[RMDB]
RNA sequence: GGGAACGACUCGAGUAGAGUCGAAAAGAGCGAUUAGACAAAGGGGUAGAGCUACAUAUUAGAUAGCUGUAUAAUCGUUCAAGUUACAUCAAAACAUCUUCAAUAUUUAUUACAUACUUUCCUUUCUGCCAGAGUACGGUAUUCGUACCGUACUCAAAUAGCGGGUAUUAUUCGUAAUACCCGCUAUAAAAGAAACAACAACAACAAC
Reactivity to 2A3 in 0.01 (KOAc 150mM, MgCl2 10mM, bicine 150mM(pH8.5), 24C), signal-to-noise 5, nucleotides 027 to 156: g010a000g010c000g000a010u010u010a030g050a070c050a040a130a100g030g040g010g030u030a040g030a000g070c000u020a000c020a060u300a200u160u180a050g190a280u020a010g000c000u000g010u030a020u010a020a000u010c000g010u010u000c030a020a030g010u020u070a060c050a120u130c060a090a130a050a030c010a070u120c110u200u060c050a130a140u090a190u190u250u070a130u140u140a060c030a040u180a130c060u050u100u130c010c010u050u100u030c020u030g030c040c020a060g000a000g010u000a000c010g000g000u010a010u040u060c120g030u010a000c000c000g010u000a000c000u000c000a000a010
Reactivity to DMS in 0.01 (KOAc 150mM, MgCl2 10mM, bicine 150mM(pH8.5), 24C), signal-to-noise 2, nucleotides 027 to 156: g000a020g030c010g040a080u000u000a030g000a100c010a030a170a120g000g040g070g050u000a070g000a080g060c000u010a030c060a190u000a170u000u000a070g000a230u000a020g000c000u040g010u000a060u000a000a030u000c020g040u000u010c030a070a140g010u010u000a130c080a130u000c050a040a060a070a100c050a040u000c060u000u000c030a030a150u000a130u010u000u000a040u020u000a120c030a160u000a090c040u000u000u000c030c030u020u010u000c020u000g050c080c090a150g000a020g020u000a000c000g030g020u000a030u000u000c280g010u000a010c000c000g030u010a000c000u010c000a010a060
The record gives the reactivity of an RNA of 207 nucleotides to 2A3 and DMS. The reactions ran in a buffer of 150 mM KOAc, 10 mM MgCl2 and 150 mM bicine (pH 8.5), at 24 C. For DMS the reverse transcriptase was MarathonRT. The 2A3 profile rests on 2,144 reads. 2A3 adducts were read by reverse transcription with SuperScript II with manganese.